An RNA of 170 nucleotides, treated with 2A3 and DMS and read out base by base. For DMS, 94,378 sequencing reads were counted. The reactions ran in a buffer of 150 mM KOAc, 10 mM MgCl2 and 150 mM bicine (pH 8.5), at 24 C. For DMS the reverse transcriptase was MarathonRT.

RNA sequence: GGGAACGACUCGAGUAGAGUCGAAAAUUGAAGGUAAAACAGCCUGUGGGUGAAACACACCCACAGGGCCCAGUGGGCGCUAGCACUCUGGUAUCACGGUACCUUCGUGCGCCUGUUUUACCGAAGGCACGAUCGUACUUCGGUACGAUCAAAAGAAACAACAACAACAAC
Reactivity to 2A3 in 0.01 (KOAc 150mM, MgCl2 10mM, bicine 150mM(pH8.5), 24C), signal-to-noise 9, nucleotides 027 to 129: u130u130g070a100a010g000g000u000a000a000a000a000c000a000g010c000c000u000g000u000g000g000g000u020g040a050a120a010c140a010c000a000c050c010c000a000c000a000g000g000g000c000c000c010a060g090u300g020g000g000c030g010c080u120a070g000c000a000c000u020c020u010g000g000u010a000u030c040a040c230g120g000u000a000c000c000u000u020c010g000u000g000c000g000c000c000u000g000u000u000u000u010a000c000c000g000a000a000g070g020c070a010c200
Reactivity to DMS in 0.01 (KOAc 150mM, MgCl2 10mM, bicine 150mM(pH8.5), 24C), signal-to-noise 9, nucleotides 027 to 129: u030u030g030a120a090g030g000u000a000a010a040a030c000a040g000c000c000u000g020u000g020g010g040u010g040a120a160a090c240a210c040a030c010c010c010a000c020a010g010g000g000c000c010c030a040g000u080g020g010g030c030g000c060u020a090g060c020a000c000u030c040u000g000g020u010a000u010c040a070c280g060g020u030a020c020c020u000u000c130g000u010g000c000g030c030c000u040g010u010u010u000u000a010c000c000g000a050a040g010g030c120a090c190